Source: RMDB library RFM100, as collected in RNAgym. The record gives the reactivity of an RNA of 177 nucleotides to 2A3 and DMS. For DMS the reverse transcriptase was MarathonRT. 2A3 adducts were read by reverse transcription with SuperScript II with manganese. The reactions ran in a buffer of 150 mM KOAc, 10 mM MgCl2 and 150 mM bicine (pH 8.5), at 24 C.
RNA sequence: GGGAACGACUCGAGUAGAGUCGAAAAGGAAGUGGCGGGAUUGGUAUAGUAGAUCAGUAAUGAUCUGAUAUGUAGGGCAAAUUGGAUUAAGACGCAUAGAAAUAUAUUUAAGCUGUAGAAGGCUUACCUUUGUCAAGACGUUCGCGUCUUGACAAAGAAAAGAAACAACAACAACAAC
Reactivity to 2A3 in 0.01 (KOAc 150mM, MgCl2 10mM, bicine 150mM(pH8.5), 24C), signal-to-noise 2, nucleotides 027 to 126: g090g040a020a010g000u090g110g220c170g050g000g090a120u090u060g140g000u100a000u020a030g170u000a000g000a000u010c000a000g180u160a170a090u190g000a010u000c050u020g000a030u030a040u140g110u150a050g000g000g010c000a000a020a130u050u050g020g130a070u000u100a260a110g020a010c000g000c070a020u030a110g140a020a080a000u190a000u010a020u080u080u050a030a010g000c000u010g020u030a030g020a130a000g020g000c020u010u030a120c000
Reactivity to DMS in 0.01 (KOAc 150mM, MgCl2 10mM, bicine 150mM(pH8.5), 24C), signal-to-noise 2, nucleotides 027 to 126: g030g000a080a100g000u020g000g000c260g000g000g010a290u030u000g020g000u010a020u030a070g030u010a000g000a000u000c000a000g010u090a160a150u000g000a000u000c000u000g000a050u020a060u000g000u000a080g000g010g040c090a090a060a180u000u010g000g000a110u030u060a020a070g010a150c140g000c060a070u020a080g000a040a120a070u020a140u020a040u000u050u020a040a020g010c000u000g010u010a190g020a130a160g000g000c040u000u000a030c270